[RMDB]
RNA sequence: GGGAACGACUCGAGUAGAGUCGAAAAAAGACCCAGUUCUCUUGGGUCCUGCAACAGGAUCUAGUGCUCUUGGGUCCACGUCAGGACCCAAUUUUCUUGGGUUCUUUGUCAGGACUCAAGGCUAUUGAGUUGACGGAAAGUUCGCUUUCCGUCAACUAAAAGAAACAACAACAACAAC
Reactivity to 2A3 in 0.01 (KOAc 150mM, MgCl2 10mM, bicine 150mM(pH8.5), 24C), signal-to-noise 1, nucleotides 027 to 126: a000a020g040a030c000c000c000a010g030u030u040c010u000c000u040u020g010g000g000u000c000c000u030g000c060a140a060c000a160g000g000a030u000c000u000a040g070u020g070c070u090c000u220u010g000g000g000u000c000c000a000c050g250u190c150a170g030g000a020c020c000c020a000a000u040u050u000u000c080u040u030g000g020g000u030u010c000u040u020u060g160u090c030a010g000g000a000c000u040c000a000a000g010g000c010u090a060u100u260g130
Reactivity to DMS in 0.01 (KOAc 150mM, MgCl2 10mM, bicine 150mM(pH8.5), 24C), signal-to-noise 1, nucleotides 027 to 126: a010a090g000a280c010c020c010a190g010u000u010c030u050c000u000u000g000g000g010u000c000c000u000g050c060a040a060c150a030g060g000a050u000c000u010a000g000u050g030c120u010c120u000u000g000g000g000u000c010c030a150c190g010u020c140a070g000g010a010c010c010c010a030a030u030u000u010u000c000u050u000g050g000g000u050u050c000u000u050u050g020u010c050a110g020g000a000c000u000c000a000a000g050g010c090u010a060u030u050g000

Source information: Chemical mapping of a 177-nucleotide RNA with 2A3 and DMS. The 2A3 profile rests on 717 reads. Conditions: 150 mM KOAc, 10 mM MgCl2 and 150 mM bicine (pH 8.5), 24 C. The data come from the RNA Mapping Database (RMDB), library RFM100. Reactivities are given for positions 27 through 126.